[RMDB]
Conditions: 150 mM KOAc, 10 mM MgCl2 and 150 mM bicine (pH 8.5), 24 C. Structure probing data (DMS and 2A3) for a 177-nucleotide construct. The DMS profile rests on 2,936 reads. Values cover nucleotides 27 to 126. DMS adducts were read by reverse transcription with MarathonRT. 2A3 adducts were read by reverse transcription with SuperScript II with manganese.
RNA sequence: GGGAACGACUCGAGUAGAGUCGAAAACCACUUUGUUUGUGUAAAUAGAGUGUGGAAUCUUGACUUUUGUGGGUGAGGAGGGUAGCAGAAAGUCAGUGGCAUGCCACAGUCCGUUUAAAAUUGCCCACCGAUUACACGUAUUCGUACGUGUAAUCGGAAAAGAAACAACAACAACAAC
Reactivity to DMS in 0.01 (KOAc 150mM, MgCl2 10mM, bicine 150mM(pH8.5), 24C), signal-to-noise 2, nucleotides 027 to 126: c040c020a100c150u020u010u000g020u000u010u010g020u010g000u000a010a040a030u000a030g010a020g030u010g010u010g000g010a090a060u000c050u000u010g020a060c070u000u000u000u010g010u000g020g010g000u010g010a100g010g000a080g010g010g000u000a110g020c060a120g000a020a030a040g010u000c060a030g040u010g000g000c130a060u000g010c000c050a030c030a070g010u000c020c030g010u000u000u000a030a040a060a080u000u000g010c030c010c010a130
Reactivity to 2A3 in 0.01 (KOAc 150mM, MgCl2 10mM, bicine 150mM(pH8.5), 24C), signal-to-noise 2, nucleotides 027 to 126: c010c000a020c040u050u070u090g160u010u060u120g170u060g050u230a040a040a020u070a040g040a030g020u070g020u090g090g040a070a060u000c030u010u070g030a030c030u090u100u080u090g100u090g060g010g020u080g050a070g020g050a020g000g070g000u040a020g010c030a020g070a050a040a000g020u040c010a000g040u020g070g000c080a040u090g030c000c000a050c000a030g090u000c020c050g020u000u040u050a030a090a080a090u060u110g080c000c010c000a040